[RMDB]
RNA sequence: GGGAACGACUCGAGUAGAGUCGAAAAGAAAACUUCCCAAUGUUGUCGAGCAAUGCGUUUGGGAUAGCGUAGAUAGAUAUGCUUCCACCACGGUUGUGCCAGUGAGUACGCUAAAGGCGAUGGCCAACGUCACGAUAUGCUUCGGCAUAUCGUGACGAAAAGAAACAACAACAACAAC
Reactivity to DMS in 0.01 (KOAc 150mM, MgCl2 10mM, bicine 150mM(pH8.5), 24C), signal-to-noise 1, nucleotides 027 to 126: g020a120a060a150a070c300u000u000c000c000c010a140a180u010g000u000u000g010u000c100g000a130g010c090a180a070u000g030c030g010u000u030u010g060g010g000a070u000a010g000c000g060u000a030g020a230u010a080g010a100u000a020u000g000c040u000u000c000c030a290c080c070a030c070g000g000u000u010g000u000g040c000c000a120g000u000g010a100g030u000a070c000g000c000u000a080a150a180g010g000c000g000a080u000g000g000c020c080a030a020
The record gives the reactivity of an RNA of 177 nucleotides to DMS. The reactions ran in a buffer of 150 mM KOAc, 10 mM MgCl2 and 150 mM bicine (pH 8.5), at 24 C. For DMS the reverse transcriptase was MarathonRT. Reactivities are given for positions 27 through 126.